[RMDB]
RNA sequence: GGGAACGACUCGAGUAGAGUCGAAAAUCGCUCCAGGUUUCCCCGGGGAUCCCUGAAGCGCUCCUCCGAGCCGCCUUCUUUUUUCUUUUCUGCUCAGGAGGUCAGGUGUGAACCACAGGAACCACUAGUUUAGUUCCGAGGAACCAACUGCGGUUCCGGAUAUUCUUUUGUUCGCAAAAGAAUAUCCAAAAGAAACAACAACAACAAC
Reactivity to 2A3 in 0.01 (KOAc 150mM, MgCl2 10mM, bicine 150mM(pH8.5), 24C), signal-to-noise 1, nucleotides 027 to 156: u060c010g000c040u010c030c000a050g010g000u000u040u040c010c010c040c060g100g010g000g020a010u020c030c030c000u010g050a100a050g130c060g080c120u070c000c000u000c000c000g060a030g000c020c040g140c100c070u210u140c090u110u300u140u110u270u140c040u120u270u090u030c050u050g020c040u010c050a150g010g000a000g000g010u040c110a040g040g010u040g010u030g120a020a050c030c020a040c070a050g000g000a000a000c000c030a000c060u070a010g080u000u050u120a020g010u000u000c000c000g050a140g020g020a000a000c000c000a040a020c050u110g000c030g010g000u000u040c000c000